[RMDB]
RNA sequence: GGGAACGACUCGAGUAGAGUCGAAAAGAUAUGGAUACCUCUGCGAUGCAUGAUGACCUCGGAAACGAGCAAGUGUAAGCAGAGGGUAUCCUAAGUCAAAACUCAGCCGCCUUCGGGCGGCUGAGAACAUUGAGUGACAGUUCGCUGUCACUCAAUGAAAAGAAACAACAACAACAAC
Reactivity to 2A3 in 0.01 (KOAc 150mM, MgCl2 10mM, bicine 150mM(pH8.5), 24C), signal-to-noise 1, nucleotides 027 to 126: g000a010u060a060u110g000g000a000u000a000c010c000u060c000u000g000c150g250a110u300g010c000a000u050g070a160u200g030a250c000c000u000c000g010g040a000a100a060c000g030a010g000c020a060a180g000u000g000u020a300a300g000c010a010g020a040g000g000g000u020a000u000c000c000u000a050a000g000u000c020a000a000a030a300c000u000c020a000g010c070c010g130c090c040u110u150c300g170g070g030c000g020g020c020u020g000a000g000a000a010
Reactivity to DMS in 0.01 (KOAc 150mM, MgCl2 10mM, bicine 150mM(pH8.5), 24C), signal-to-noise 2, nucleotides 027 to 126: g010a070u010a300u010g010g010a010u000a010c010c020u000c000u000g020c000g010a210u020g000c000a010u010g010a100u010g020a100c300c010u000c000g000g000a070a120a170c020g010a000g020c100a050a110g000u030g030u000a120a300g000c000a000g000a000g000g000g010u010a000u010c000c000u020a030a090g010u000c040a100a100a200a130c000u000c000a000g000c000c000g040c000c040u000u000c200g020g010g060c010g010g000c010u010g000a010g000a050a070